[RMDB]
RNA sequence: GGGAACGACUCGAGUAGAGUCGAAAAGAUAUGGAUCGUAGGGACAUGUCGAGCAUCGGAAACGAUGUUAACGACAACAGCCCUCGAUCCUAAGUCAAAACGCCUUUGGACUUCGGUCCAAAGGCGAGCCAUAUGAUGACUUCGGUCAUCAUAUGGCAAAAGAAACAACAACAACAAC
Reactivity to 2A3 in 0.01 (KOAc 150mM, MgCl2 10mM, bicine 150mM(pH8.5), 24C), signal-to-noise 2, nucleotides 027 to 126: g010a010u040a020u080g020g030a010u020c050g110u300a030g020g040g000a070c250a300u300g020u010c010g030a020g000c000a000u010c010g010g030a030a020a010c010g000a000u010g010u040u060a240a060c010g010a000c000a150a070c080a170g010c040c000c000u000c000g010a000u000c000c010u030a000a000g000u000c010a000a050a080a210c000g010c000c000u000u000u000g030g000a020c000u060u080c300g140g000u070c040c000a010a000a000g010g030c000g000a000
Reactivity to DMS in 0.01 (KOAc 150mM, MgCl2 10mM, bicine 150mM(pH8.5), 24C), signal-to-noise 1, nucleotides 027 to 126: g030a000u000a230u000g000g010a000u000c000g010u000a010g000g000g010a090c120a190u000g050u010c030g050a150g010c000a000u000c000g000g000a040a070a070c000g030a000u000g000u000u010a030a180c050g000a010c000a120a090c280a210g000c000c000c000u000c030g000a010u010c000c010u000a000a110g000u020c000a070a100a120a250c000g000c000c000u000u000u000g000g000a030c010u000u000c300g040g000u010c000c000a000a000a000g000g020c000g010a000
Source information: Source: RMDB library TTRDES, as collected in RNAgym. Chemical mapping of a 177-nucleotide RNA with 2A3 and DMS. DMS adducts were read by reverse transcription with MarathonRT. For 2A3, 3,690 sequencing reads were counted.